[RMDB]
RNA sequence: GGGAACGACUCGAGUAGAGUCGAAAACCCGGGGAUCCCUCUUCGAGCCCUUGCCACCAUACAGGUAAGUCACGUAGUGUAUUCCCCAGAGGGGCACUUUUUAUGUGUACUUCUGCAGGUUAAGCUCGGCGCUCAAGAGUUGUAUCCACCGGGUAGUCUAUUACUCCCAGUUCGCUGGGAGUAAUAGAAAAGAAACAACAACAACAAC
Reactivity to 2A3 in 0.01 (KOAc 150mM, MgCl2 10mM, bicine 150mM(pH8.5), 24C), signal-to-noise 2, nucleotides 027 to 156: c000c000c000g000g000g000g000a000u000c000c020c000u020c050u050u120c300g010a020g020c000c000c000u000u000g020c020c010a010c020c010a060u130a300c010a020g070g060u160a080a010g010u010c000a000c010g030u040a030g020u020g000u040a300u200u240c010c010c000c050a030g150a130g000g000g020g030c000a020c010u300u300u120u080u060a070u200g010u000g050u080a010c010u020u040c000u000g000c070a060g000g000u030u130a040a010g000c000u000c010g030g000c160g000c020u000c000a000a000g010a000g000u060u230g020u070a010u020c020c020a030c090c130g000g000g000u000a010g020u000
The record gives the reactivity of an RNA of 207 nucleotides to 2A3. The reactions ran in a buffer of 150 mM KOAc, 10 mM MgCl2 and 150 mM bicine (pH 8.5), at 24 C. It was measured as part of the RMDB library VIROID. Reactivities are given for positions 27 through 156. For 2A3 the reverse transcriptase was SuperScript II with manganese.